Source information: Source: RMDB library OK2TRN, as collected in RNAgym. Chemical mapping of a 177-nucleotide RNA with 2A3 and DMS.

[RMDB]
RNA sequence: GGGAACGACUCGAGUAGAGUCGAAAACGACGGGACAGCUGAACUUACAACCACUGCAGCCACACGUUUCAUGAAGGACUUGCAUUUCACCGGGACAAAUGGUGUUGGUGAGGUGGGUCGUGGUAUACGAGAUACUUCCUUUCGAGGAAGUAUCUCGAAAAGAAACAACAACAACAAC
Reactivity to 2A3 in 0.01 (KOAc 150mM, MgCl2 10mM, bicine 150mM(pH8.5), 24C), signal-to-noise 2, nucleotides 027 to 126: c010g090a010c000g000g000g050a020c030a020g020c040u070g020a090a070c010u050u120a040c090a090a030c000c010a010c020u050g050c090a020g080c010c000a020c010a010c040g010u000u090u050c040a070u100g100a080a020g060g030a030c010u090u100g060c070a060u030u010u040c020a020c000c020g050g000g030a030c040a050a230a080u180g190g030u170g130u100u070g000g000u030g000a030g010g000u050g000g000g000u030c060g030u030g040g040u090a100u030a080
Reactivity to DMS in 0.01 (KOAc 150mM, MgCl2 10mM, bicine 150mM(pH8.5), 24C), signal-to-noise 1, nucleotides 027 to 126: c080g000a100c110g000g000g000a030c060a060g040c050u020g020a050a080c080u000u000a110c130a060a130c050c010a070c040u000g000c070a300g000c020c030a070c040a060c050g000u000u000u020c000a150u000g000a120a080g010g000a080c050u000u000g010c040a070u010u000u000c080a040c040c040g000g000g000a100c060a070a110a080u020g010g000u000g010u000u000g010g010u000g000a110g000g050u000g000g000g040u000c060g000u000g030g010u000a060u000a150